[RMDB]
RNA sequence: GGGAACGACUCGAGUAGAGUCGAAAACAUGGGGAACUACAUCUGUGUCGCGAGUUCGAUUCUCGCCAGGGCCAGGUCCUGUAGCUCAGUUGGUAGAGCAAGCUGUUCCCCGGACACUUGUCGUCAUAAAAGUUGCCCCCGUUCGCGGGGGCAACAAGCUACACUAUCAGUUCGCUGAUAGUGUAGCAAAAGAAACAACAACAACAAC
Reactivity to DMS in 0.01 (KOAc 150mM, MgCl2 10mM, bicine 150mM(pH8.5), 24C), signal-to-noise 1, nucleotides 027 to 156: c070a110u010g010g080g000g030a020a030c020u030a050c090a060u000c100u000g010u010g020u010c010g000c050g030a070g000u000u000c060g010a300u010u010c000u010c010g000c090c030a080g010g000g020c040c150a120g060g000u010c040c030u000g080u010a070g020c010u010c000a120g000u000u030g000g030u010a060g000a060g010c000a170a200g030c000u010g000u000u000c010c020c000c020g000g000a060c030a060c150u000u010g010u000c010g000u000c020a160u020a020a090a120a100g000u010u000g000c000c000c000c000c000g010u010u000c300g000c070g000g020g070g000g030c000a000a010c010a010a120
Reactivity to 2A3 in 0.01 (KOAc 150mM, MgCl2 10mM, bicine 150mM(pH8.5), 24C), signal-to-noise 1, nucleotides 027 to 156: c020a120u100g000g000g000g000a010a010c020u120a050c070a090u110c050u030g060u050g030u200c020g000c000g000a010g010u000u030c020g000a020u010u040c000u000c010g000c000c010a020g010g000g000c040c070a060g000g190u050c000c020u020g050u020a020g000c000u000c000a070g000u210u080g070g190u170a020g000a020g040c030a040a000g040c030u080g000u000u020c030c020c000c000g010g000a010c020a010c030u100u180g050u150c040g020u020c060a050u080a130a120a010a030g000u000u000g000c000c020c010c030c000g010u000u040c100g000c000g010g000g010g000g000c000a000a010c000a000a000